[RMDB]
RNA sequence: GGGAACGACUCGAGUAGAGUCGAAAAUUGGCUUGGUCAAAUCAGUGUUCAAACUAUCUCCUGCCGUUUCAAGAGGAUCUAGGGCUCUAGAAGAAAAGGCAUCAAUGCGCUUCGGCGCAUUGAUGCCCCAAUGUAAAGGCUUCGGCCUUUACAUUGGAAAAGAAACAACAACAACAAC
Reactivity to DMS in 0.01 (KOAc 150mM, MgCl2 10mM, bicine 150mM(pH8.5), 24C), signal-to-noise 2, nucleotides 027 to 126: u010u000g020g020c040u000u000g000g000u010c080a040a130a080u000c070a040g000u000g010u000u000c040a040a130a120c050u000a070u000c040u000c020c010u000g000c050c050g020u000u010u000c020a040a060g010a100g000g000a060u010c040u000a050g010g000g020c100u000c020u010a060g010a050a140g000a060a050a060a090g000g010c000a000u000c000a000a010u000g020c000g020c020u000u010c160g020g000c000g020c000a010u000u010g010a010u000g010c020c000
Reactivity to 2A3 in 0.01 (KOAc 150mM, MgCl2 10mM, bicine 150mM(pH8.5), 24C), signal-to-noise 2, nucleotides 027 to 126: u070u040g020g030c030u030u050g070g040u130c070a020a060a180u060c020a080g060u030g100u240u070c050a080a080a010c060u030a050u060c020u000c010c010u020g080c030c020g020u000u020u060c070a060a020g060a020g110g020a050u030c030u060a020g040g010g010c020u010c030u140a060g050a140a020g030a010a110a000a010g020g010c000a000u010c000a010a010u020g000c020g040c070u030u090c280g100g000c040g050c040a020u000u010g010a000u000g010c010c020

This 177-nucleotide RNA was probed chemically with DMS and 2A3.
The DMS profile rests on 1,887 reads.
Conditions: 150 mM KOAc, 10 mM MgCl2 and 150 mM bicine (pH 8.5), 24 C.
Values cover nucleotides 27 to 126.
DMS adducts were read by reverse transcription with MarathonRT.